[RMDB]
Structure probing data (2A3) for a 207-nucleotide construct.

RNA sequence: GGGAACGACUCGAGUAGAGUCGAAAAGAAUUGAAGAAAAUGAGUGGACUUGUGUCUGAGCACUUGGGAACUCAGCAAUCCCUGGGUGUUACCUUGAGAAGGAGCCAAAUUCCAGACAUACAAGUGGAGACUUGAAAAUGGAAGCUCAAUUCCACAAAUGCACUAGGUCGUUCGCGACCUAGUGCAUAAAAGAAACAACAACAACAAC
Reactivity to 2A3 in 0.01 (KOAc 150mM, MgCl2 10mM, bicine 150mM(pH8.5), 24C), signal-to-noise 1, nucleotides 027 to 156: g020a040a090u120u120g060a090a020g040a040a130a020a010u190g010a050g000u060g000g080a050c010u000u130g000u010g000u120c100u000g040a040g080c010a010c040u000u010g010g000g020a020a040c000u000c150a000g000c070a070a060u000c010c000c000u010g000g040g000u100g100u090u100a150c000c000u080u050g110a080g030a130a000g020g010a000g000c000c040a000a020a040u130u020c000c000a010g000a010c020a020u120a000c000a010a040g040u000g040g110a030g030a060c050u040u060g000a000a000a140a170u140g010g000a000a000g000c000u000c000a010a060u000u000c010c000a020c020a100a060
It was measured as part of the RMDB library OK3TST.
As a SHAPE reagent, 2A3 marks flexible, mostly unpaired nucleotides at the ribose 2'-OH.